[RMDB]
Chemical mapping of a 177-nucleotide RNA with 2A3 and DMS.
The reactions ran in a buffer of 150 mM KOAc, 10 mM MgCl2 and 150 mM bicine (pH 8.5), at 24 C.
2A3 adducts were read by reverse transcription with SuperScript II with manganese.
For DMS the reverse transcriptase was MarathonRT.
It was measured as part of the RMDB libraries RFM100 and RFMREP.
Values cover nucleotides 27 to 126.
RNA sequence: GGGAACGACUCGAGUAGAGUCGAAAAUGAAUGGCAAUCAAGCCACCGUCUUUUCUGUAAACAGGUUCUCUUGUGCAAAUCGCGUUUCAUGGACAGACGGUGUCUUGCCCUGAUGUCCGGUUUUUUCCUCAUUAGGUUACUUCGGUAACCUAAUGAGAAAAGAAACAACAACAACAAC
Reactivity to 2A3 in 0.01 (KOAc 150mM, MgCl2 10mM, bicine 150mM(pH8.5), 24C), signal-to-noise 7, nucleotides 027 to 126: u140g070a050a030u070g040g010c050a030a070u050c000a060a010g000c000c000a000c000c000g010u000c000u000u020u010u000c010u040g180u260a020a000a000c010a030g030g000u050u020c110u020c000u190u220g160u150g150c080a050a010a020u030c030g030c060g110u000u000u010c080a080u160g000g000a000c000a020g000a000c000g000g010u000g000u000c010u000u010g010c000c000c010u070g030a070u080g050u050c040c050g040g020u000u010u000u000u010u010c000
Reactivity to DMS in 0.01 (KOAc 150mM, MgCl2 10mM, bicine 150mM(pH8.5), 24C), signal-to-noise 4, nucleotides 027 to 126: u010g010a150a090u010g000g000c100a120a090u040c040a020a010g000c060c000a010c010c000g000u000c000u000u000u000u000c010u000g010u020a010a020a030c010a160g010g000u000u010c100u000c170u020u020g020u010g030c140a070a030a020u000c010g010c170g010u000u000u000c040a030u020g010g010a010c220a030g000a020c010g010g010u000g000u000c000u000u000g000c100c010c010u010g000a100u010g000u000c020c090g010g010u000u000u010u020u010u000c100